[RMDB]
RNA sequence: GGGAACGACUCGAGUAGAGUCGAAAAACAGCACCAAGCCCUGCUGUAACUUUUGCUCCAAGGGCAAUUUUUAUGGGAGCAAUAGAGGUUUGGAGAGCCUGACCAUUAACAGAUUCUAAACAUUGGACAGUGGAUACCUAUUCGUAGGUAUCCACUGAAAAGAAACAACAACAACAAC
Reactivity to DMS in 0.01 (KOAc 150mM, MgCl2 10mM, bicine 150mM(pH8.5), 24C), signal-to-noise 2, nucleotides 027 to 126: a060c000a000g010c020a060c260c120a120a260g010c000c010c010u010g010c000u010g020u000a060a130c080u000u000u020u000g020c010u010c000c010a050a020g000g010g020c020a040a000u010u010u000u000u020a070u030g020g000g010a030g010c030a010a010u000a010g040a110g010g010u000u000u000g030g010a110g010a130g020c030c010u010g020a120c060c050a150u030u020a090a080c100a040g000a060u000u000c020u000a040a090a060c150a110u010u000g000g030a300
Reactivity to 2A3 in 0.01 (KOAc 150mM, MgCl2 10mM, bicine 150mM(pH8.5), 24C), signal-to-noise 2, nucleotides 027 to 126: a000c000a010g000c010a020c050c050a080a040g050c000c000c030u030g000c010u030g010u050a040a090c010u070u040u040u030g000c020u000c040c000a040a030g060g000g020c010a020a030u080u100u000u060u190a100u140g090g020g020a020g000c010a000a000u010a040g100a040g020g080u040u060u100g090g010a100g000a020g110c000c010u000g080a060c040c000a030u040u070a080a090c020a020g120a090u090u010c020u100a010a160a060c010a110u020u170g070g030a000